[RMDB]
The record gives the reactivity of an RNA of 177 nucleotides to DMS and 2A3.
RNA sequence: GGGAACGACUCGAGUAGAGUCGAAAACCGCCCCUCACGAGGUGCAAACUUCUCAAGGCACUCAGUCAUGGAAUUAAGAACACAAACAUCAUUGCCAUCAACAUUCAAAGGCGGAUACCACGGCGGAAUACGUCAUUAGCUUCGGCUAAUGACGUAUAAAAGAAACAACAACAACAAC
Reactivity to DMS in 0.01 (KOAc 150mM, MgCl2 10mM, bicine 150mM(pH8.5), 24C), signal-to-noise 2, nucleotides 027 to 126: c020c010g000c070c010c010c010u030c080a130c230g000a080g000g030u000g000c080a050a090a090c090u000u010c030u000c100a110a050g010g000c060a000c040u020c050a090g020u000c080a040u020g000g000a070a060u000u010a050a090g030a110a040c170a040c050a040a020a040c090a020u010c080a080u000u000g010c040c040a050u010c060a110a140c100a030u000u000c100a030a040a060g030g020c020g000g010a040u000a050c100c040a120c060g010g000c080g000g010a130
Reactivity to 2A3 in 0.01 (KOAc 150mM, MgCl2 10mM, bicine 150mM(pH8.5), 24C), signal-to-noise 1, nucleotides 027 to 126: c000c000g030c000c020c000c000u020c000a080c030g110a070g040g020u010g000c000a080a000a140c050u170u060c100u090c100a020a080g050g030c000a020c000u070c020a030g000u040c030a070u110g030g030a050a010u160u070a180a080g050a080a030c080a020c070a230a100a010c030a040u050c000a040u010u110g000c040c010a030u110c060a000a050c010a060u100u070c040a090a100a080g020g030c050g000g000a020u020a050c020c040a020c060g040g030c060g040g040a050
For 2A3 the reverse transcriptase was SuperScript II with manganese.